[RMDB]
RNA sequence: GGGAACGACUCGAGUAGAGUCGAAAAACUGGACGCUGGGAUCCUGUGCUUAGCCACAGGGAGCCUUACUGAAGCGCGCACGGUAAGGCGAAGAACUGUGGUGGGAGCACAGAUCCUGUGCUGAAGCGCGCACGGCAACCGAAAGGUGCGAUACUAACUCUUACUUUUAGUUCGCUAAAAGUAAGAGAAAAGAAACAACAACAACAAC
Reactivity to DMS in 0.01 (KOAc 150mM, MgCl2 10mM, bicine 150mM(pH8.5), 24C), signal-to-noise 2, nucleotides 027 to 156: a110c060u000g010g000a130c070g030c020u000g040g030g000a030u000c060c050u000g060u020g030c020u020u010a300g010c030c010a000c000a030g010g020g000a090g020c010c000u000u010a010c000u000g000a060a090g030c000g010c020g020c000a300c030g000g030u010a010a020g000g040c000g020a100a100g010a120a150c040u000g010u000g010g010u000g040g000g010a060g010c000a010c010a040g000a060u000c020c000u000g000u030g000c000u020g000a060a060g040c000g010c010g000c010a300c000g020g030c010a040a060c010c010g000a140a060a190g020g010u000g000c010g020a290u000a100c260u010a090a280
Reactivity to 2A3 in 0.01 (KOAc 150mM, MgCl2 10mM, bicine 150mM(pH8.5), 24C), signal-to-noise 3, nucleotides 027 to 156: a000c070u100g080g090a030c010g010c010u000g000g000g000a010u070c040c070u020g000u000g000c000u020u020a000g000c000c000a000c000a010g010g000g000a000g000c000c000u000u010a000c000u030g050a200a070g000c000g010c000g000c000a010c000g010g000u000a000a000g010g000c000g020a100a010g000a000a000c000u000g000u010g000g040u030g040g300g020a010g000c000a000c000a000g000a000u000c000c000u000g000u000g000c000u010g010a070a000g000c010g000c000g000c000a020c010g000g000c000a010a010c000c000g040a070a030a030g010g010u010g010c020g000a050u100a090c060u100a070a070